RNA sequence: GGGAACGACUCGAGUAGAGUCGAAAAGUCUUUGUCAAUUGAGGAGUUUGCUGACGUAGUAAAGGAACAAGUCUCAGACUUGCUUGUUAAAUUACUGCGUGGAAUGCCGAUUCCAGAUUUUGAUUUAAUAGGGUGAGGUUCGCCUCACCCAAAAGAAACAACAACAACAAC
Reactivity to 2A3 in 0.01 (KOAc 150mM, MgCl2 10mM, bicine 150mM(pH8.5), 24C), signal-to-noise 3, nucleotides 027 to 129: g010u040c010u200u110u100g000u000c000a000a030u010u040g030a030g000g000a000g010u000u000u000g020c010u050g010a000c000g000u000a000g020u000a000a050a020g150g060a060a020c000a000a000g030u000c030u020c160a080g030a090c010u060u070g000c000u000u030g000u020u030a030a090a010u000u000a000c010u000g020c010g000u050g030g180a170a080u090g000c000c000g010a000u000u010c000c010a040g050a300u010u000u000u000g010a050u000u060u150a090a070u060a060
Reactivity to DMS in 0.01 (KOAc 150mM, MgCl2 10mM, bicine 150mM(pH8.5), 24C), signal-to-noise 2, nucleotides 027 to 129: g020u000c050u020u010u000g040u000c000a000a020u000u000g010a300g060g000a040g090u000u000u000g070c000u030g060a010c010g030u040a000g020u010a010a000a130g020g030a030a000c040a000a050g010u020c160u110c140a190g000a070c130u010u010g040c000u040u020g070u020u040a000a120a030u020u000a000c040u000g020c000g050u010g050g070a070a080u060g020c040c030g000a030u040u010c020c050a120g000a000u000u000u000u080g000a000u020u050u000a090a110u080a000